An RNA of 177 nucleotides, treated with 2A3 and DMS and read out base by base.
The data come from the RNA Mapping Database (RMDB), library OK1LIB.
For 2A3 the reverse transcriptase was SuperScript II with manganese.
For DMS the reverse transcriptase was MarathonRT.
RNA sequence: GGGAACGACUCGAGUAGAGUCGAAAAAAAGAAAAGAAAACUCAACGCUUUUUCCUCUAAGAUCAGGAACUAGAAAAGGAUUUGACUCUCACAACGUUGAUACCAUACUGGAGGUUUUAACCAGGCACCUUCAGUGUCAGUUCGCUGACACUGAAGGAAAAGAAACAACAACAACAAC
Reactivity to 2A3 in 0.01 (KOAc 150mM, MgCl2 10mM, bicine 150mM(pH8.5), 24C), signal-to-noise 2, nucleotides 027 to 126: a000a000a000g200a010a060a010a010g080a010a090a000a000c040u030c030a020a010c020g010c070u000u000u000u000u000c010c000u000c030u090a200a070g010a130u110c030a000g040g040a050a050c010u040a060g130a060a060a010a020g050g030a010u090u030u000g070a030c040u000c010u020c050a040c030a090a070c020g000u020u010g010a020u040a280c000c020a000u070a040c010u000g020g010a010g070g000u060u090u020u020a010a030c000c000a000g070g000c010a070
Reactivity to DMS in 0.01 (KOAc 150mM, MgCl2 10mM, bicine 150mM(pH8.5), 24C), signal-to-noise 1, nucleotides 027 to 126: a010a070a140g020a110a000a040a050g010a090a090a020a030c150u000c140a000a060c040g000c000u000u000u000u000u000c000c030u000c030u010a050a040g000a190u030c180a000g010g000a060a050c120u010a010g000a080a030a050a110g000g020a200u000u030u000g000a000c080u000c030u000c000a130c080a040a060c070g000u000u000g030a030u030a010c000c000a070u030a120c030u000g000g000a020g000g000u000u070u000u010a070a090c050c030a050g080g000c080a180